[RMDB]
RNA sequence: GGGAACGACUCGAGUAGAGUCGAAAAGGGUUUGAGCCAUCGCCCGAAUAGGAUGGAUGAUACAAGUCGGCAUUGUACGCGACGUAGUACGUACUCAUUAGUGCGAAAGCACGGUUAGUCCGACUGGGCAGGGACGAUCUUCUGUCAAUACUUAGAACACUAUUAUCAGGUUCGCCUGAUAAUAGUGAAAAGAAACAACAACAACAAC
Reactivity to 2A3 in 0.01 (KOAc 150mM, MgCl2 10mM, bicine 150mM(pH8.5), 24C), signal-to-noise 9, nucleotides 027 to 156: g070g010g010u080u110u150g080a050g020c010c010a020u030c020g030c010c000c020g050a110a160u160a110g050g040a020u030g020g030a030u080g020a020u070a110c080a100a030g000u010c000g010g020c060a070u050u160g020u030a030c020g010c050g070a070c080g030u020a020g030u050a040c010g010u010a020c000u020c060a080u050u140a060g000u000g000c010g050a080a020a010g000c000a000c000g000g020u040u050a020g020u020c000c000g000a000c020u020g000g000g000c040a060g030g000g000a020c070g060a090u040c030u150u020c030u080g060u030c000a050a070u090a140c060u100u130a040g050a110a010
Reactivity to DMS in 0.01 (KOAc 150mM, MgCl2 10mM, bicine 150mM(pH8.5), 24C), signal-to-noise 6, nucleotides 027 to 156: g000g020g010u000u000u010g010a120g020c030c040a040u000c040g010c020c010c010g010a100a120u000a080g020g010a070u000g010g010a090u010g010a170u000a060c060a050a060g020u000c010g030g010c060a240u000u000g020u000a020c010g020c000g010a160c150g020u010a150g020u010a030c020g010u010a020c010u000c150a130u000u000a070g030u000g010c000g010a130a100a240g010c000a010c010g010g020u000u010a140g010u010c000c000g010a050c020u010g000g000g000c050a090g010g010g000a090c080g000a070u010c060u000u000c040u000g020u000c030a060a090u000a100c080u010u020a110g010a110a290